[RMDB]
About this RNA: This 177-nucleotide RNA was probed chemically with 2A3 and DMS. The reactions ran in a buffer of 150 mM KOAc, 10 mM MgCl2 and 150 mM bicine (pH 8.5), at 24 C. 2A3 adducts were read by reverse transcription with SuperScript II with manganese. Values cover nucleotides 27 to 126. The DMS profile rests on 3,430 reads.
RNA sequence: GGGAACGACUCGAGUAGAGUCGAAAAGAAGGUGACGCCAAUGGACUCCAUCUGAGCAAUGAAGGCUUCGUCUUUGGUGUUGGCGCCGGCGGUGCCGGCGGUGGCGACGGCAAGUCCGAUGGCGGCGGCUGUGUAUGCUUUUCGAAGCAUACACAGCAAAAGAAACAACAACAACAAC
Reactivity to 2A3 in 0.01 (KOAc 150mM, MgCl2 10mM, bicine 150mM(pH8.5), 24C), signal-to-noise 2, nucleotides 027 to 126: g080a060a030g150g120u100g080a050c010g000c010c000a030a060u110g000g000a000c030u000c050c020a040u050c050u160g100a050g100c020a030a110u130g030a090a000g060g000c000u130u140c060g020u020c000u020u090u130g110g000u110g040u080u060g060g000c030g030c030c000g000g030c110g260g200u180g030c020c040g010g000c070g030g110u070g010g000c070g000a070c050g020g020c060a060a030g000u050c030c000g060a080u020g020g020c000g010g010c020g000
Reactivity to DMS in 0.01 (KOAc 150mM, MgCl2 10mM, bicine 150mM(pH8.5), 24C), signal-to-noise 3, nucleotides 027 to 126: g020a140a100g000g020u000g010a070c030g020c010c000a020a190u010g000g000a050c010u010c040c030a080u000c050u020g010a140g020c070a110a050u000g000a070a090g000g010c070u000u000c170g020u000c020u000u000u000g000g000u000g010u000u010g000g020c030g000c000c010g010g000c000g020g000u010g030c010c000g020g000c010g010g020u000g000g010c110g000a050c110g010g020c120a090a040g010u000c000c000g020a100u000g000g020c020g020g000c020g010